[RMDB]
RNA sequence: GGGAACGACUCGAGUAGAGUCGAAAAGAAGGAAAGAAAGCUGACCCUUCUGCUGACGGAUCUUGUGGAGCACCACAGUGCAGAAGGGGAGAGAAGCUUUAAUGCCGACCGUCUGGGCAGCCUUGAAAAAACGGAUUCUUCUUCGGAAGAAUCCGAACAAAUGGUGUAUGUUCGCAUACACCAUUUGAAAAGAAACAACAACAACAAC
Reactivity to 2A3 in 0.01 (KOAc 150mM, MgCl2 10mM, bicine 150mM(pH8.5), 24C), signal-to-noise 5, nucleotides 027 to 156: g060a020a010g010g040a100a040a070g070a060a070a020g000c030u050g110a080c000c000c000u000u000c000u010g010c020u040g060a070c070g090g050a100u110c060u130u110g010u040g020g030a110g150c100a130c110c000a010c010a030g040u040g040c000a000g000a010a000g000g000g020g000a010g010a010g010a030a010g000c000u020u040u020a090a040u120g010c000c000g010a040c020c020g050u040c050u110g020g010g000c020a010g030c010c020u060u090g090a100a060a010a000a000a010c010g000g000a000u000u000c000u000u000c000u010u050c150g050g000a000a000g000a000a000u010c000c000g000a010a000
Reactivity to DMS in 0.01 (KOAc 150mM, MgCl2 10mM, bicine 150mM(pH8.5), 24C), signal-to-noise 4, nucleotides 027 to 156: g000a100a090g000g010a120a070a120g000a060a020a060g040c020u000g010a140c000c010c000u000u000c000u000g020c020u000g020a170c070g020g000a080u000c040u020u000g020u000g010g020a180g030c230a120c010c000a040c020a110g010u010g020c010a030g010a050a030g010g020g010g010a050g000a130g000a100a030g030c010u000u000u000a060a090u000g020c010c010g020a080c010c030g000u000c070u000g020g010g010c010a080g010c030c040u010u000g000a000a050a080a080a110a170c020g020g010a030u000u000c000u000u000c000u020u010c300g040g000a030a010g000a020a010u000c000c000g020a020a060